[RMDB]
RNA sequence: GGGAACGACUCGAGUAGAGUCGAAAACACAUUGCCGUGUCAAUGUGAGGUUGCUGGAUGGUUAUGACAAGAAAUCACAUUAAAUUCACUGGGGUAACAUUGUUCAUGAAACGGGAUAAUGUGUUUCAGCGAUGAACCACCCAUGGCCUUACUACAACAGGAUCCUAGUAUUCGUACUAGGAUCCUGAAAAGAAACAACAACAACAAC
Reactivity to 2A3 in 0.01 (KOAc 150mM, MgCl2 10mM, bicine 150mM(pH8.5), 24C), signal-to-noise 4, nucleotides 027 to 156: c030a010c010a030u050u100g050c050c140g160u110g080u210c050a070a080u090g000u010g020a010g030g020u040u090g130c130u020g020g000a040u030g000g040u040u060a070u110g120a070c080a160a080g120a090a130a030u170c040a020c030a110u140u190a160a090a150u080u030c030a030c060u020g000g000g020g020u060a110a020c000a020u000u030g010u030u030c050a070u090g170a150a100a150c250g010g000g020a020u020a050a000u030g010u020g030u000u010u010c010a010g020c030g050a050u060g040a020a000c010c000a010c020c000c000a020u030g010g000c010c000u010u100a030c050u070a050c040a130a010
Reactivity to DMS in 0.01 (KOAc 150mM, MgCl2 10mM, bicine 150mM(pH8.5), 24C), signal-to-noise 2, nucleotides 027 to 156: c000a040c120a060u000u000g000c000c150g040u010g000u000c030a080a080u010g030u000g010a060g010g010u000u000g060c090u000g020g020a060u000g000g000u000u000a050u020g000a110c030a100a190g000a040a090a130u000c010a060c110a140u010u000a070a090a150u000u000c020a030c020u000g010g010g000g000u000a060a070c010a030u000u000g010u000u010c020a080u010g050a110a070a130c220g020g010g010a020u000a040a000u000g010u000g000u000u000u000c000a040g040c020g000a060u010g010a040a060c000c010a040c000c010c010a040u000g000g000c000c010u000u030a040c040u000a020c020a050a260

Notes
Structure probing data (2A3 and DMS) for a 207-nucleotide construct. Conditions: 150 mM KOAc, 10 mM MgCl2 and 150 mM bicine (pH 8.5), 24 C. For 2A3 the reverse transcriptase was SuperScript II with manganese. The data come from the RNA Mapping Database (RMDB), library OK3TST. For 2A3, 2,762 sequencing reads were counted. Values cover nucleotides 27 to 156. For DMS the reverse transcriptase was MarathonRT.